[RMDB]
RNA sequence: GGGAACGACUCGAGUAGAGUCGAAAAGCGCAGCAUUACGAUGCUGCGCAAACACUAUGUGAUCUUAUUAAAAUGAGGUUAAAUUUCGAGGUUAAAAAUAGUUUUAAUAUUGCUAUAGUCUACCCUCGUGCAACGCGCAUGCUACGGCAUGCGCGAAUGAUAGCGUACUAUUCGUAGUACGCUAUCAAAAAGAAACAACAACAACAAC
Reactivity to 2A3 in 0.01 (KOAc 150mM, MgCl2 10mM, bicine 150mM(pH8.5), 24C), signal-to-noise 2, nucleotides 027 to 156: g010c000g050c000a030g000c020a010u060u070a060c230g080a010u000g000c000u010g030c000g030c000a000a000a000c020a010c020u210a160u240g160u100g040a030u020c030u050u050a100u070u150a270a170a070a070u060g020a030g030g000u050u050a100a060a150u290u140u050c020g000a010g000g040u050u060a000a100a000a050a100u000a010g010u000u000u140u140a150a160u160a160u190u180g000c000u000a000u000a060g070u030c020u030a020c000c000c030u030c010g080u050g010c030a050a120c040g000c000g000c000a000u010g000c000u000a040c290g170g000c000a000u000g010c000g000c000g000a000a000
Reactivity to DMS in 0.01 (KOAc 150mM, MgCl2 10mM, bicine 150mM(pH8.5), 24C), signal-to-noise 1, nucleotides 027 to 156: g010c010g020c030a040g020c000a000u010u000a170c230g010a140u010g010c010u000g090c000g000c000a000a040a060c040a130c090u010a050u000g010u000g040a090u000c000u000u000a110u000u000a060a170a100a090u000g010a040g030g020u000u020a010a110a290u000u000u000c040g020a110g020g030u000u010a020a110a110a150a060u000a060g010u000u000u000u000a050a210u000a100u000u000g000c040u010a070u000a040g070u000c040u000a080c190c010c010u020c010g030u000g020c060a110a090c000g000c040g000c070a040u010g000c000u050a120c300g120g000c000a000u000g000c000g020c000g000a020a020